[RMDB]
RNA sequence: GGGAACGACUCGAGUAGAGUCGAAAAGUGCAAAUGAAAAACUUGUCUUUGGGAUGUCUAGGAUUGACGGGAUGCUCAAGCCUUGGGGUUCAAUUCUUGAGAGUGGUGCAAUUUUCCCAGCACUCAAGACUACCAGUAGUUUCGACUACUGGUAGUCAAAAGAAACAACAACAACAAC
Reactivity to 2A3 in 0.01 (KOAc 150mM, MgCl2 10mM, bicine 150mM(pH8.5), 24C), signal-to-noise 3, nucleotides 027 to 126: g100u100g040c020a040a060a250u140g070a090a060a080a050a070c030u040u060g030u040c010u050u040u070g060g020g010a070u070g110u140c020u060a040g060g020a120u030u110g020a030c060g000g060g050a040u090g000c020u020c040a010a030g010c000c010u020u040g050g030g010g000u050u030c020a050a080u090u040c010u040u090g040a090g010a020g050u080g020g030u030g000c010a010a070u060u020u020u060c000c000c000a010g000c010a020c000u060c030a030a060
Reactivity to DMS in 0.01 (KOAc 150mM, MgCl2 10mM, bicine 150mM(pH8.5), 24C), signal-to-noise 4, nucleotides 027 to 126: g020u000g020c040a060a070a100u000g000a080a070a050a090a060c120u010u000g000u010c030u000u000u000g010g010g000a050u010g000u000c020u010a080g010g000a090u000u010g010a080c100g000g010g000a080u010g000c080u000c040a060a060g010c080c060u000u000g010g010g010g010u000u000c060a040a100u010u000c050u000u000g000a100g000a060g020u000g000g000u000g010c030a050a050u000u000u000u000c000c010c010a140g010c050a050c020u000c110a110a110